The data come from the RNA Mapping Database (RMDB), library OK2TRN. An RNA of 177 nucleotides, treated with DMS and 2A3 and read out base by base. The 2A3 profile rests on 1,867 reads. For DMS, 1,571 sequencing reads were counted. The reactions ran in a buffer of 150 mM KOAc, 10 mM MgCl2 and 150 mM bicine (pH 8.5), at 24 C.

[RMDB]
RNA sequence: GGGAACGACUCGAGUAGAGUCGAAAAUGGCCAAGGUUUGAGCUAACAGCUAUUGCCAAUGAUGCUUCUGCAGGGGUACUUGCGGAUGCCCUGUGCCAAAGAAACUGAGAUUCUUGUAAGCAGUGUCCUCUGAUACUCACUUCGGUGAGUAUCAGAGAAAAGAAACAACAACAACAAC
Reactivity to DMS in 0.01 (KOAc 150mM, MgCl2 10mM, bicine 150mM(pH8.5), 24C), signal-to-noise 2, nucleotides 027 to 126: u010g030g010c000c020a040a130g000g010u020u000u010g020a070g020c030u010a160a070c200a210g000c020u000a100u010u000g000c020c030a110a110u020g000a200u030g010c030u010u000c010u000g000c040a070g010g000g000g000u010a040c010u000u000g010c030g030g000a130u000g000c010c030c040u000g020u000g000c040c080a040a080a090g000a080a040a040c120u020g010a120g000a080u010u000c040u000u000g000u000a060a090g010c030a020g020u000g000u010c040
Reactivity to 2A3 in 0.01 (KOAc 150mM, MgCl2 10mM, bicine 150mM(pH8.5), 24C), signal-to-noise 2, nucleotides 027 to 126: u070g040g000c030c010a030a030g100g000u060u160u260g080a040g060c030u080a110a040c000a100g010c010u110a100u170u160g030c010c000a040a030u100g110a120u100g000c000u030u020c010u020g000c010a010g010g030g060g110u130a240c020u010u050g030c000g070g010a000u020g010c030c000c000u060g030u100g000c000c000a040a080a030g030a040a070a030c070u110g020a020g030a200u100u020c030u070u120g040u080a060a010g000c000a010g020u010g050u130c000